This 177-nucleotide RNA was probed chemically with DMS and 2A3.
RNA sequence: GGGAACGACUCGAGUAGAGUCGAAAAACUUGCUGUGUAAGAACUGGCAGCCAUUUGUGGAGGCCGAUCCGACUCGCGCGACGAUGGCGAUAGACUUUUUUAGUGGGAUAAACAAGACAUACAUGGCACGUGGUAGCUUAUUCGUAAGCUACCACGUAAAAGAAACAACAACAACAAC
Reactivity to DMS in 0.01 (KOAc 150mM, MgCl2 10mM, bicine 150mM(pH8.5), 24C), signal-to-noise 3, nucleotides 027 to 126: a070c120u010u010g020c010u000g000u000g000u010a040a050g000a150a100c190u000g000g010c050a070g000c010c030a110u000u010u010g030u000g010g000a040g010g030c030c030g010a030u000c030c040g010a110c090u000c060g020c040g040c110g020a080c150g000a070u010g010g010c030g000a070u010a090g000a120c050u010u010u010u000u000u010a090g030u010g010g000g000a060u010a050a070a100c230a040a050g020a100c130a140u010a020c030a040u010g010g010c040
Reactivity to 2A3 in 0.01 (KOAc 150mM, MgCl2 10mM, bicine 150mM(pH8.5), 24C), signal-to-noise 3, nucleotides 027 to 126: a000c060u040u050g000c010u020g000u030g010u060a010a080g060a110a020c050u070g010g020c020a010g030c020c010a090u100u120u260g260u080g040g040a040g060g010c050c020g020a020u030c030c030g040a040c030u010c060g040c010g010c030g090a110c050g050a090u150g070g000c050g020a020u040a040g100a060c050u070u200u030u010u060u060a030g010u090g090g010g020a060u050a050a100a010c070a040a030g070a050c040a030u070a010c010a020u010g010g030c040
The reactions ran in a buffer of 150 mM KOAc, 10 mM MgCl2 and 150 mM bicine (pH 8.5), at 24 C. For 2A3, 2,156 sequencing reads were counted. As a SHAPE reagent, 2A3 marks flexible, mostly unpaired nucleotides at the ribose 2'-OH. Source: RMDB library OK2TST, as collected in RNAgym.